Chemical mapping of a 177-nucleotide RNA with DMS and 2A3. For 2A3, 3,591 sequencing reads were counted. For 2A3 the reverse transcriptase was SuperScript II with manganese. Source: RMDB library OK2TST, as collected in RNAgym.

RNA sequence: GGGAACGACUCGAGUAGAGUCGAAAAAAGGGACGCCAUAAAAAAGGCGUGAUUGAGGGCGAUAAUGCACGUCAGGUGCGUCAGCGCCUGAAAGAACAAGGCCUAGUGCCGAUGGAAGUGGUGGAGACGAUAGUGGGUGAUUCGUCACCCACUAUCGAAAAGAAACAACAACAACAAC
Reactivity to DMS in 0.01 (KOAc 150mM, MgCl2 10mM, bicine 150mM(pH8.5), 24C), signal-to-noise 4, nucleotides 027 to 126: a070a050g010g000g000a110c020g010c010c000a080u020a010a060a130a070a130a080g010g000c010g020u010g000a100u000u000g010a230g010g000g010c030g010a070u000a060a050u010g010c060a040c070g010u010c180a050g010g030u000g000c000g000u000c190a060g010c020g010c000c000u010g000a060a030a080g000a110a080c100a080a130g000g000c000c010u020a120g020u000g030c010c020g010a080u000g000g000a060a090g010u000g000g010u010g010g000a120g000a190
Reactivity to 2A3 in 0.01 (KOAc 150mM, MgCl2 10mM, bicine 150mM(pH8.5), 24C), signal-to-noise 3, nucleotides 027 to 126: a010a030g050g000g020a010c010g000c010c010a080u300a060a150a020a010a000a020g020g000c020g010u010g020a030u040u100g010a080g000g000g030c000g020a050u040a080a030u110g000c020a010c050g130u180c150a080g190g000u010g000c020g010u070c090a040g040c000g010c000c000u000g030a020a020a000g050a030a020c030a020a030g010g010c000c020u050a050g030u080g240c010c000g020a030u120g010g020a050a060g030u060g060g030u080g040g030a060g000a030